[RMDB]
RNA sequence: GGGAACGACUCGAGUAGAGUCGAAAAUCCGAAGCAGGGGGGACCACCCUCCAAGCCUGAAUACUCUCCUGUGACCGAUAGCGCACAAGUACCGUGAGGGAAAGGUGAAAAGCACCCCGGGAGGGGAUCGUUUAUGCUCCUUCGGGAGCAUAAACGAAAAAGAAACAACAACAACAAC
Reactivity to 2A3 in 0.01 (KOAc 150mM, MgCl2 10mM, bicine 150mM(pH8.5), 24C), signal-to-noise 2, nucleotides 027 to 126: u010c030c010g010a000a010g030c060a000g000g000g000g000g010g000a130c040c080a160c020c020c000u000c000c000a030a050g000c000c030u080g020a070a030u130a160c010u030c000u010c000c010u040g030u080g120a100c020c050g100a060u260a090g000c010g000c020a000c020a150a080g010u010a020c090c040g060u050g000a110g030g000g020a010a030a080g120g010u000g000a080a020a000a000g030c020a020c030c000c040c000g010g040g000a010g000g000g020g000a000
Reactivity to DMS in 0.01 (KOAc 150mM, MgCl2 10mM, bicine 150mM(pH8.5), 24C), signal-to-noise 2, nucleotides 027 to 126: u000c000c010g000a240a040g070c180a240g000g000g030g000g010g000a300c210c300a110c000c010c000u000c000c040a040a080g060c040c070u000g050a160a060u000a140c010u000c000u010c010c000u000g000u030g000a010c080c140g020a120u040a090g000c010g050c010a070c030a000a050g000u010a130c010c000g020u030g000a060g000g000g000a070a090a040g000g000u000g000a040a150a080a120g010c110a110c000c090c070c010g000g100g000a050g000g000g000g000a030